RNA sequence: GGGAACGACUCGAGUAGAGUCGAAAAAGAGAGGAAGAAGUCCGCUGACGUGCUAGGUGGGUACGCAGUGUCUGGCAGCUGCCUCACUGAGCUUUUGGUUGUGGAGCGUUGUGCGUGGCAGAGAAGGCGUAGCUUGUUGUUUCGACAACAAGCUACGAAAAGAAACAACAACAACAAC
Reactivity to DMS in 0.01 (KOAc 150mM, MgCl2 10mM, bicine 150mM(pH8.5), 24C), signal-to-noise 2, nucleotides 027 to 126: a060g010a110g010a060g000g000a080a050g020a060a080g020u010c050c030g000c030u000g010a130c030g010u010g010c040u000a110g020g020u000g010g010g010u000a030c120g010c020a030g010u000g000u010c140u000g000g010c060a130g010c020u000g000c020c010u000c020a070c050u000g000a080g010c050u000u000u000u000g020g010u000u000g030u000g000g010a070g010c060g010u000u000g010u000g010c130g020u010g000g020c020a040g010a080g000a080a080g010g000
Reactivity to 2A3 in 0.01 (KOAc 150mM, MgCl2 10mM, bicine 150mM(pH8.5), 24C), signal-to-noise 2, nucleotides 027 to 126: a000g100a010g010a020g020g020a050a030g050a040a040g060u030c010c000g000c030u020g020a080c020g030u040g000c010u050a040g160g060u070g100g020g000u040a020c040g000c010a020g030u010g040u090c090u080g080g000c020a050g010c030u070g010c000c000u030c000a010c030u050g030a040g010c000u080u040u080u150g160g000u040u090g070u070g050g000a050g010c030g060u120u060g030u060g030c050g030u060g050g000c040a010g000a000g040a130a030g060g000